[RMDB]
RNA sequence: GGGAACGACUCGAGUAGAGUCGAAAACCACCCGUCUAUUAUAAGCCUAUUAUUAUGUCGGCGGCUUAUAAUAAGUUUGUUGCUGAUAGUGAUGUUAGUGUGGGUGAGUGUACUAAUUAUCAUAAUUUUGUUAAUGAGGAUUUUUUUUCGAUGCAUGCCCUGUGUCUGUAUUCGUACAGACACAGGGAAAAGAAACAACAACAACAAC
Reactivity to 2A3 in 0.01 (KOAc 150mM, MgCl2 10mM, bicine 150mM(pH8.5), 24C), signal-to-noise 1, nucleotides 027 to 156: c050c010a090c040c000c010g120u030c090u010a010u000u000a010u000a010a000g050c000c000u100a250u300u060a130u300u150a130u250g210u170c110g090g140c180g000g000c010u000u000a000u000a010a010u010a010a010g000u000u030u040g030u000u000g000c040u040g010a050u150a110g030u030g010a070u090g000u030u030a070g030u000g000u010g140g150g000u010g030a010g000u050g000u010a040c040u080a050a050u140u210a040u070c070a100u110a300a120u190u160u200u030g040u030u040a090a130u070g020a050g080g030a080u220u230u210u210u000u000u020u020c090g000a040u130g040c030a000u090g120
Source: RMDB library OK3TST, as collected in RNAgym.
An RNA of 207 nucleotides, treated with 2A3 and read out base by base.